[RMDB]
RNA sequence: GGGAACGACUCGAGUAGAGUCGAAAAAUGCUCAGCCUCCAUAUCAUUGGAGCAUCGAGAGGUCAAUAAGCCCGGAUAAAACUGAGAUCGUCAACGGUGCUGUGCAAACUGCUGACAGGCAAAGACCAACUCACUUCGGUUUCGACCGAAGUGAGUUAAAAGAAACAACAACAACAAC
Reactivity to 2A3 in 0.01 (KOAc 150mM, MgCl2 10mM, bicine 150mM(pH8.5), 24C), signal-to-noise 3, nucleotides 027 to 126: a000u100g000c010u000c000a000g010c010c000u000c010c000a040u230a160u200c120a040u140u030g010g010a000g000c000a040u040c040g090a090g010a000g050g070u070c050a040a090u150a200a000g020c000c000c000g090g000a100u160a120a160a010a010c070u120g020a010g010a200u110c040g040u010c120a050a050c070g000g070u120g080c050u090g030u050g040c030a130a150a030c020u020g000c000u090g020a060c020a020g020g040c060a160a060a000g000a010c000c040
Reactivity to DMS in 0.01 (KOAc 150mM, MgCl2 10mM, bicine 150mM(pH8.5), 24C), signal-to-noise 2, nucleotides 027 to 126: a130u050g020c020u000c000a150g000c140c000u000c000c000a010u070a070u040c200a190u070u030g030g000a000g000c130a020u010c040g020a140g000a050g000g010u000c050a020a120u080a100a060g020c000c060c000g000g000a120u000a060a080a100a030c040u020g000a080g000a030u000c060g000u000c030a030a080c000g000g000u000g030c120u010g000u000g000c130a010a140a100c140u000g030c030u020g040a080c120a050g040g030c000a140a120a020g060a130c060c000